[RMDB]
About this RNA:
The data come from the RNA Mapping Database (RMDB), library TTRDEL. An RNA of 177 nucleotides, treated with DMS and 2A3 and read out base by base. The RNA was probed in 150 mM KOAc, 10 mM MgCl2 and 150 mM bicine (pH 8.5) at 24 C. Values cover nucleotides 27 to 126. For DMS, 3,060 sequencing reads were counted.

RNA sequence: GGGAACGACUCGAGUAGAGUCGAAAAGAUAUGGAUGUGUGCGAAGCCUACUAGUGCGAAGAACUCGGAAACGAGGGAGCACAUAGGCGUAGACACAUCCUAAGUCAAAGCUCUGUUCGCAGAGCAACGUAAAGGUACACUUCGGUGUACCUUUACGAAAAGAAACAACAACAACAAC
Reactivity to DMS in 0.01 (KOAc 150mM, MgCl2 10mM, bicine 150mM(pH8.5), 24C), signal-to-noise 4, nucleotides 027 to 126: g000a040u010a300u000g000g010a000u000g020u000g010u010g080c000g000a120a300g000c010c000u000a010c150u010a060g050u000g010c000g020a060a140g030a120a150c000u000c000g010g000a080a090a200c000g010a030g020g000g000a050g010c000a020c010a150u000a010g010g000c010g000u010a200g020a040c010a000c000a010u000c010c010u000a030a050g000u010c040a060a110a120g000c000u000c000u000g000u000u030c220g010c010a000g010a000g000c010a040a030
Reactivity to 2A3 in 0.01 (KOAc 150mM, MgCl2 10mM, bicine 150mM(pH8.5), 24C), signal-to-noise 3, nucleotides 027 to 126: g000a020u090a050u130g000g000a000u020g050u030g030u150g300c030g190a220a000g000c020c000u030a090c070u160a160g000u000g000c030g120a280a010g010a030a020c010u000c010g020g030a050a060a040c010g000a000g000g040g010a000g010c010a000c000a010u010a000g010g000c030g020u000a000g000a000c000a000c010a000u010c000c000u000a000a010g020u020c050a070a040a070g000c010u030c000u000g060u130u140c300g000c080a000g010a010g040c000a010a030